Structure probing data (2A3 and DMS) for a 177-nucleotide construct. For DMS, 2,999 sequencing reads were counted. The 2A3 profile rests on 6,264 reads. The RNA was probed in 150 mM KOAc, 10 mM MgCl2 and 150 mM bicine (pH 8.5) at 24 C. For 2A3 the reverse transcriptase was SuperScript II with manganese.
[RMDB]
RNA sequence: GGGAACGACUCGAGUAGAGUCGAAAAGAUAUGGAUGCUAGACAUGCUCUUGAGGAACUUUGAUCCGAGGCUUCGGAAACGAAGCCUCGGGGAGUUUGGAGAGAGCAACAGCUAGCAUCCUAAGUCACGUUAUUAGAUAGUUCGCUAUCUAAUAACGAAAAGAAACAACAACAACAAC
Reactivity to 2A3 in 0.01 (KOAc 150mM, MgCl2 10mM, bicine 150mM(pH8.5), 24C), signal-to-noise 2, nucleotides 027 to 126: g030a030u070a050u130g010g010a000u010g000c010u010a000g040a190c080a290u170g010c000u020c000u030u050g040a120g120g140a060a000c020u300u300u110g020a020u030c020c000g020a030g030g080c000u000u020c040g050g020a110a050a070c030g000a000a000g010c080c000u010c020g000g010g000g000a000g000u010u030u140g120g000a130g020a010g000a020g020c000a000a000c000a000g000c010u000a000g000c010a000u010c000c000u000a020a010g030u000c010a000
Reactivity to DMS in 0.01 (KOAc 150mM, MgCl2 10mM, bicine 150mM(pH8.5), 24C), signal-to-noise 4, nucleotides 027 to 126: g010a050u000a300u010g000g010a000u000g000c000u000a000g010a070c080a300u000g010c000u000c000u010u000g000a300g000g000a010a010c000u000u010u050g010a040u000c000c010g000a040g030g010c020u010u000c000g000g020a090a030a110c010g000a030a010g040c000c000u000c000g000g000g000g000a010g030u000u000u000g010g030a300g000a010g000a010g020c000a020a020c270a150g010c010u000a000g030c000a000u000c000c000u000a000a060g020u010c040a300